Source information: Structure probing data (2A3 and DMS) for a 177-nucleotide construct. Values are in units of 0.01, from 0 to 300, in steps of 10. For 2A3, 27,646 sequencing reads were counted. Conditions: 150 mM KOAc, 10 mM MgCl2 and 150 mM bicine (pH 8.5), 24 C. 2A3 adducts were read by reverse transcription with SuperScript II with manganese. The data come from the RNA Mapping Database (RMDB), library OK2TRN.
[RMDB]
RNA sequence: GGGAACGACUCGAGUAGAGUCGAAAAUACGGCCACGGCCGUACUGCGCCGUACGGCGCGGCCUCACAGGAUCCGUACAUAUCGGAUCACUGUACAUAGUACGCGUACAGCUGGCCAGCGUACUGGCUAUUGUGUAAGGUUUCGACCUUACACAAUAAAAAGAAACAACAACAACAAC
Reactivity to 2A3 in 0.01 (KOAc 150mM, MgCl2 10mM, bicine 150mM(pH8.5), 24C), signal-to-noise 9, nucleotides 027 to 126: u070a010c030g000g000c020c020a060c110g170g020c020c000g000u000a010c010u050g110c050g030c040c060g080u140a090c150g000g000c010g000c000g010g010c000c000u060c020a030c010a010g000g010a000u000c010c000g020u050a090c080a230u280a110u200c010g000g000a000u000c010a050c080u010g010u030a020c010a070u130a010g010u020a010c010g020c050g090u070a090c090a100g050c090u110g060g000c020c000a020g000c010g020u010a010c010u010g020g000c010
Reactivity to DMS in 0.01 (KOAc 150mM, MgCl2 10mM, bicine 150mM(pH8.5), 24C), signal-to-noise 9, nucleotides 027 to 126: u010a050c110g010g010c000c020a070c240g030g020c000c000g010u000a000c010u000g010c080g010c090c070g010u000a050c150g010g010c000g020c010g000g000c030c010u000c180a040c030a020g000g000a010u000c000c000g020u000a190c300a170u010a090u010c010g010g000a010u000c000a040c010u000g000u000a120c240a090u010a040g010u000a010c010g020c020g010u010a080c200a130g010c140u000g010g010c020c020a100g010c030g010u000a010c010u000g000g010c050